The record gives the reactivity of an RNA of 177 nucleotides to 2A3 and DMS. Source: RMDB library OK2TST, as collected in RNAgym.
RNA sequence: GGGAACGACUCGAGUAGAGUCGAAAAGGAAGAUCUGCGUGAUAGGACGGGUCAACCUCAUCCCCACAGGAUAGCGUUCGUGGAGAGUCUCCCAUGGGUUGGCCUGGAGCUGACGAAUACCCAGCGAACAAAUAGCUACCUUCGGGUAGCUAUUUGUAAAAGAAACAACAACAACAAC
Reactivity to 2A3 in 0.01 (KOAc 150mM, MgCl2 10mM, bicine 150mM(pH8.5), 24C), signal-to-noise 2, nucleotides 027 to 126: g010g010a040a080g000a070u050c030u110g030c050g080u150g080a120u090a140g030g100a000c010g000g010g020u010c010a000a000c010c000u050c000a140u040c010c010c050c000a040c010a030g110g000a040u150a050g070c030g070u030u050c030g000u060g030g070a060g000a040g100u010c030u020c060c030c000a010u070g030g000g020u030u050g060g000c000c000u030g030g040a040g000c020u000g000a030c000g000a050a060u050a120c020c010c020a030g060c000g040a020
Reactivity to DMS in 0.01 (KOAc 150mM, MgCl2 10mM, bicine 150mM(pH8.5), 24C), signal-to-noise 4, nucleotides 027 to 126: g010g030a100a150g000a020u000c020u010g020c090g030u030g000a180u000a100g020g020a150c020g000g000g030u000c010a030a140c000c000u000c100a100u000c030c030c010c080a060c070a100g010g010a080u010a090g010c080g010u010u000c100g000u000g000g000a080g000a080g000u010c100u010c010c010c020a210u000g020g010g000u000u000g010g010c000c010u010g010g010a120g030c040u000g000a080c070g000a150a080u010a090c030c030c000a120g010c060g010a110
About this RNA:
In probing experiments dimethyl sulfate is read out at A N1 and C N3, which are open when not base-paired. For DMS, 2,900 sequencing reads were counted. Conditions: 150 mM KOAc, 10 mM MgCl2 and 150 mM bicine (pH 8.5), 24 C.